[RMDB]
RNA sequence: GGGAACGACUCGAGUAGAGUCGAAAAUCCCCAGCCAGGGAUUUUCUUCCUCGAGUUUCUUGAUGGUCUUCCUGGUCUUCCGGAGAUCUUUCUCGAGCUCCUCCGCCUUUUUCCUUGCUGUGAUCCAAUACACCGAACUUCGGUUCGGUGAAAAGAAACAACAACAACAAC
Reactivity to DMS in 0.01 (KOAc 150mM, MgCl2 10mM, bicine 150mM(pH8.5), 24C), signal-to-noise 3, nucleotides 027 to 129: u010c000c000c040c170a070g000c230c300a110g000g000g000a060u010u000u000u000c050u000u000c020c020u050c050g020a020g040u010u020u040c020u060u090g020a120u050g020g020u030c040u000u000c040c020u030g030g030u020c090u020u050c000c000g030g020a060g030a000u040c070u000u000u000c030u050c090g040a000g010c050u030c010c030u040c010c040g020c030c000u020u040u030u090u020c040c030u010u050g050c000u040g030u040g020a090u000c030c040a120a110u070a190
Reactivity to 2A3 in 0.01 (KOAc 150mM, MgCl2 10mM, bicine 150mM(pH8.5), 24C), signal-to-noise 3, nucleotides 027 to 129: u040c000c000c010c000a000g130c030c060a010g000g000g000a000u020u000u030u060c020u040u040c000c030u030c030g030a040g010u000u070u040c040u060u100g060a080u090g030g020u030c010u090u080c020c040u060g010g040u060c040u180u030c030c010g020g000a040g010a030u000c000u010u080u020c020u020c010g050a040g030c010u050c000c000u000c010c000g010c010c000u040u080u020u100u040c000c000u010u020g010c030u010g030u080g060a070u050c030c030a040a020u040a060